[RMDB]
RNA sequence: GGGAACGACUCGAGUAGAGUCGAAAAGAUAUGGAUCGACCCGAGGACCUAAGACAGUACAUCGGAAACGAUGUAUCGAGGAGAACCUCGCGAUCCUAAGUCAAAGUACCGCGUUCGCGCGGUACAACGUAUUGGAGCGGUUCGCCGCUCCAAUACGAAAAGAAACAACAACAACAAC
Reactivity to DMS in 0.01 (KOAc 150mM, MgCl2 10mM, bicine 150mM(pH8.5), 24C), signal-to-noise 3, nucleotides 027 to 126: g010a030u000a260u010g000g020a020u000c020g010a140c160c150c090g000a050g060g000a080c020c050u000a130a150g030a100c300a100g010u000a020c010a000u010c000g000g010a050a070a110c000g010a000u000g000u000a000u000c030g010a100g020g010a100g000a080a060c000c050u000c000g030c000g010a000u000c000c000u000a020a090g010u000c030a070a130a100g010u000a010c000c000g020c000g020u000u000c220g030c020g000c000g010g010u000a000c000a060a100
Reactivity to 2A3 in 0.01 (KOAc 150mM, MgCl2 10mM, bicine 150mM(pH8.5), 24C), signal-to-noise 2, nucleotides 027 to 126: g010a020u050a020u050g020g000a000u010c020g040a130c030c210c040g010a020g040g040a080c090c240u300a240a040g130a060c050a020g040u010a000c000a010u000c000g010g010a010a010a020c000g020a000u000g000u010a020u070c030g020a110g120g000a250g050a110a100c000c000u010c000g040c000g000a000u000c000c020u010a060a000g020u020c040a150a150a020g010u000a010c000c020g010c040g050u040u080c300g010c000g010c000g150g000u000a000c000a000a010
This 177-nucleotide RNA was probed chemically with DMS and 2A3.
Values cover nucleotides 27 to 126.
DMS adducts were read by reverse transcription with MarathonRT.
For 2A3, 3,025 sequencing reads were counted.
The RNA was probed in 150 mM KOAc, 10 mM MgCl2 and 150 mM bicine (pH 8.5) at 24 C.